[RMDB]
RNA sequence: GGGAACGACUCGAGUAGAGUCGAAAAAGGAGUGCUGUGAGGUUUUAGGGAUUGAUAUCAACUGUGUUGAUGUUCAGCGCUUGAUCACAGGUCUGGGAUACGUUGUGGAUCACCGAGAACUUCGGGCGUACUAGGACGCUUUCGAGCGUCCUAGUACAAAAGAAACAACAACAACAAC
Reactivity to DMS in 0.01 (KOAc 150mM, MgCl2 10mM, bicine 150mM(pH8.5), 24C), signal-to-noise 1, nucleotides 027 to 126: a080g000g030a040g010u000g010c030u000g000u000g000a090g000g010u010u000u010u130a110g010g000g000a100u000u000g000a020u010a040u000c020a020a010c030u020g020u000g010u030u000g030a030u000g010u000u000c010a050g010c080g000c050u000u000g000a070u010c050a010c060a070g020g030u010c050u000g000g000g020a160u010a070c110g000u000u010g030u010g000g020a080u000c030a170c030c000g020a080g000a060a040c110u000u000c020g010g010g040c200
Reactivity to 2A3 in 0.01 (KOAc 150mM, MgCl2 10mM, bicine 150mM(pH8.5), 24C), signal-to-noise 1, nucleotides 027 to 126: a020g130g030a090g030u160g020c010u030g080u080g180a010g010g070u010u130u200u180a120g050g060g020a080u040u090g000a020u040a020u020c010a020a010c040u130g110u060g040u300u000g000a010u040g050u100u010c010a020g020c110g040c090u000u080g090a030u080c020a040c020a110g000g040u030c060u080g050g000g010a010u030a190c050g000u080u040g060u080g040g090a070u090c010a040c060c000g050a040g030a130a060c030u060u020c010g040g040g000c020
This 177-nucleotide RNA was probed chemically with DMS and 2A3. For 2A3, 833 sequencing reads were counted. The RNA was probed in 150 mM KOAc, 10 mM MgCl2 and 150 mM bicine (pH 8.5) at 24 C. Reactivities are given for positions 27 through 126.